RNA sequence: GGGAACGACUCGAGUAGAGUCGAAAAUAUUCAGGACUAAAAGAAGAUGUAGGAUUCGUUGUCAUUCGUUCUAGCAACGGAACACAGAAGUAUGAUGAGAGAUUAGAGCAACACGCAAAAGGCUUAGAUAAAGUGGGAAUGCCUUUCGGACUGUACCAGCAGGCAAGUAAUUCGUUACUUGCCUGCUAAAAGAAACAACAACAACAAC
Reactivity to 2A3 in 0.01 (KOAc 150mM, MgCl2 10mM, bicine 150mM(pH8.5), 24C), signal-to-noise 2, nucleotides 027 to 156: u140a020u050u110c060a030g070g010a050c040u110a050a060a080a000g090a030a040g010a060u030g030u060a030g000g050a090u010u100c030g010u030u030g070u050c030a060u070u060c040g050u030u020c050u070a010g030c030a000a000c020g030g010a060a010c080a000c020a050g070a080a020g040u060a040u090g050a020u030g010a020g010a000g030a090u000u070a060g010a030g030c020a030a040c040a030c130g050c020a000a030a000a070g010g000c030u060u070a010g040a040u170a210a070a020g040u090g000g040g000a060a060u070g000c000c010u040u070u020c020g020g050a010c070u050g010u000a060c000c000
Reactivity to DMS in 0.01 (KOAc 150mM, MgCl2 10mM, bicine 150mM(pH8.5), 24C), signal-to-noise 2, nucleotides 027 to 156: u010a110u000u020c050a090g020g020a170c050u010a050a060a100a110g020a020a060g000a100u000g040u010a090g020g000a170u000u010c050g040u000u010g020u000c010a220u000u000c060g000u000u020c050u000a250g010c040a060a030c040g030g010a030a080c070a130c070a070g020a060a070g020u000a030u000g000a070u010g000a100g020a080g010a060u000u000a080g010a070g030c030a050a070c080a060c030g000c040a030a030a070a070g010g060c010u000u000a070g000a110u000a040a020a080g030u010g000g020g000a080a060u000g020c020c000u000u010u000c030g010g030a130c020u010g000u010a160c080c070
Chemical mapping of a 207-nucleotide RNA with 2A3 and DMS. The reactions ran in a buffer of 150 mM KOAc, 10 mM MgCl2 and 150 mM bicine (pH 8.5), at 24 C. For DMS, 3,829 sequencing reads were counted. 2A3 adducts were read by reverse transcription with SuperScript II with manganese. Source: RMDB library OK3TST, as collected in RNAgym.